Background: An RNA of 177 nucleotides, treated with 2A3 and DMS and read out base by base. The DMS profile rests on 2,326 reads. It was measured as part of the RMDB library M2PK50. The reactions ran in a buffer of 150 mM KOAc, 10 mM MgCl2 and 150 mM bicine (pH 8.5), at 24 C. The 2A3 profile rests on 5,336 reads.
RNA sequence: GGGAACGACUCGAGUAGAGUCGAAAAGACUUGUGGUUCGCCACAAGUCAAAUAAGCAUGUAGAAAUGGCCAAACUUCAUGCAUCGAAAGAAAGGCCAUAAAAAAGGACAUGCUUCGGCAUGUCCAACUUUUAAGACAACUUCGGUUGUCUUAAAAGAAAAGAAACAACAACAACAAC
Reactivity to 2A3 in 0.01 (KOAc 150mM, MgCl2 10mM, bicine 150mM(pH8.5), 24C), signal-to-noise 3, nucleotides 027 to 126: g000a000c000u020u000g010u010g030g000u050u090c220g030c080c000a010c010a010a000g000u010c000a000a000a010u000a000a010g000c000a000u000g020u050a010g020a020a090a040u020g010g000c010c000a010a050a040c010u020u020c020a010u020g000c010a090u180c120g200a120a120a100g160a100a110a060g050g000c030c000a000u060a010a060a000a000a010a020g000g000a000c000a000u000g010c000u020u020c120g090g000c010a000u000g000u010c000c000a000a010
Reactivity to DMS in 0.01 (KOAc 150mM, MgCl2 10mM, bicine 150mM(pH8.5), 24C), signal-to-noise 2, nucleotides 027 to 126: g020a010c000u000u000g020u000g000g020u000u010c200g030c000c000a000c000a000a010g000u000c000a020a070a050u010a130a130g060c010a010u000g000u010a030g000a030a030a020u000g010g010c010c010a170a180a070c010u000u000c010a010u010g020c020a170u010c130g010a100a090a100g010a060a080a100g030g010c020c010a080u020a000a020a060a080a040a070g000g000a000c000a000u000g000c000u010u010c160g020g000c010a000u000g000u000c000c010a010a010